[RMDB]
RNA sequence: GGGAACGACUCGAGUAGAGUCGAAAAGAUAUGGAAUUGACCGAUAAGACGUGAUCGGAAACGAUCAUACGUCUUUUGACGGUCAAUUUCCUAAGUCAAAACGCCCUGAACUUCGGUUCAGGGCGAAUCACAACACAAUCUUCGGAUUGUGUUGUGAAAAAGAAACAACAACAACAAC
Reactivity to 2A3 in 0.01 (KOAc 150mM, MgCl2 10mM, bicine 150mM(pH8.5), 24C), signal-to-noise 1, nucleotides 027 to 126: g010a000u020a020u080g000g000a010a000u000u000g000a010c000c010g090a110u140a300a090g000a000c030g020u000g000a000u000c000g000g000a050a000a000c000g010a000u000c020a030u140a060c050g000u020c000u000u050u070u080g050a010c000g000g000u000c000a000a000u000u000u000c010c000u010a030a010g000u010c020a000a010a100a140c020g000c070c000c000u000g000a030a040c000u060u090c300g140g000u000u000c020a010g000g020g000c010g000a000a000
Reactivity to DMS in 0.01 (KOAc 150mM, MgCl2 10mM, bicine 150mM(pH8.5), 24C), signal-to-noise 2, nucleotides 027 to 126: g020a030u000a160u010g010g000a020a030u000u000g000a010c000c010g000a120u010a010a010g020a020c000g020u000g000a000u000c000g000g020a050a060a100c000g000a000u000c000a090u010a070c130g010u000c000u000u000u010u010g000a170c020g000g000u010c000a010a000u000u000u010c010c010u010a020a130g010u010c020a100a040a100a190c020g020c000c000c030u000g020a040a010c000u000u010c130g020g020u000u000c000a030g020g010g010c010g000a000a030